Source information: Chemical mapping of a 177-nucleotide RNA with DMS and 2A3. The reactions ran in a buffer of 150 mM KOAc, 10 mM MgCl2 and 150 mM bicine (pH 8.5), at 24 C.
RNA sequence: GGGAACGACUCGAGUAGAGUCGAAAAUGCAUCACCAGUGAUUCAGUUUGAGUCAGACAUCCAACAACAACUGAGCAAAAGAAUCAUCUCAGAUCCAAGCAAUGGUGACGCGCAGAUAGAAGAGACAUAGAAGUCUUAGGUUCGCCUAAGACUUUUAAAAAGAAACAACAACAACAAC
Reactivity to DMS in 0.01 (KOAc 150mM, MgCl2 10mM, bicine 150mM(pH8.5), 24C), signal-to-noise 9, nucleotides 027 to 126: u040g030c010a120u010c010a020c010c010a050g020u010g010a040u010u000c000a100g000u010u010u010g000a150g010u010c010a030g000a130c210a090u050c140c180a120a120c240a090a130c240a060a110c020u000g000a020g000c070a040a030a150a080g010a040a020u010c030a020u010c120u010c120a090g000a080u020c040c030a110a100g010c140a100a070u010g000g000u000g000a020c090g010c040g010c160a060g010a090u030a050g000a070a050g010a080g000a080c150a120
Reactivity to 2A3 in 0.01 (KOAc 150mM, MgCl2 10mM, bicine 150mM(pH8.5), 24C), signal-to-noise 9, nucleotides 027 to 126: u100g010c010a020u010c000a000c000c000a010g040u010g040a020u020u010c020a070g180u010u050u070g110a100g100u020c010a010g050a080c050a080u120c120c060a100a090c020a060a040c020a050a040c140u020g000a020g080c020a000a030a040a040g030a010a010u020c020a060u020c070u020c090a070g030a150u040c040c010a070a050g040c040a110a160u050g000g010u010g000a020c020g010c020g000c100a010g030a110u140a050g110a150a010g070a030g010a040c020a050